[RMDB]
RNA sequence: GGGAACGACUCGAGUAGAGUCGAAAAUUAUGGCGCUUAUUCCUAUGCACAUCAUUUGGUCGAAGUAGCUGUGCGUUUUGCAGCUCCAAGCGCUAUCAAGAAACGGCGUGGUAUUCAACUACGUGCGCAAUACGAUGCUGUUCGCAGCAUCGUAUUGAAAAGAAACAACAACAACAAC
Reactivity to 2A3 in 0.01 (KOAc 150mM, MgCl2 10mM, bicine 150mM(pH8.5), 24C), signal-to-noise 3, nucleotides 027 to 126: u120u050a070u080g000g000c000g000c020u020u040a020u030u120c000c000u010a040u060g090c130a130c000a190u190c010a050u100u150u200g090g010u090c070g080a080a040g020u130a000g000c000u000g030u050g050c040g120u050u060u190u240g000c040a000g000c000u000c030c020a020a010g000c020g000c000u010a040u060c110a050a120g060a110a100a020c000g010g000c030g000u010g000g000u040a120u140u170c050a050a030c000u000a010c010g030u060g200c030g000
Reactivity to DMS in 0.01 (KOAc 150mM, MgCl2 10mM, bicine 150mM(pH8.5), 24C), signal-to-noise 3, nucleotides 027 to 126: u000u000a070u010g000g000c010g020c010u000u000a210u020u010c010c010u010a050u030g000c130a090c150a100u030c140a120u020u000u000g010g010u000c100g010a090a130g010u000a050g010c050u000g020u010g000c210g000u010u000u020u010g000c000a030g020c010u020c080c120a030a030g000c000g010c010u000a040u010c210a060a030g010a070a050a230c050g000g010c000g010u000g010g030u010a160u000u000c290a060a060c020u000a000c010g000u010g010c040g020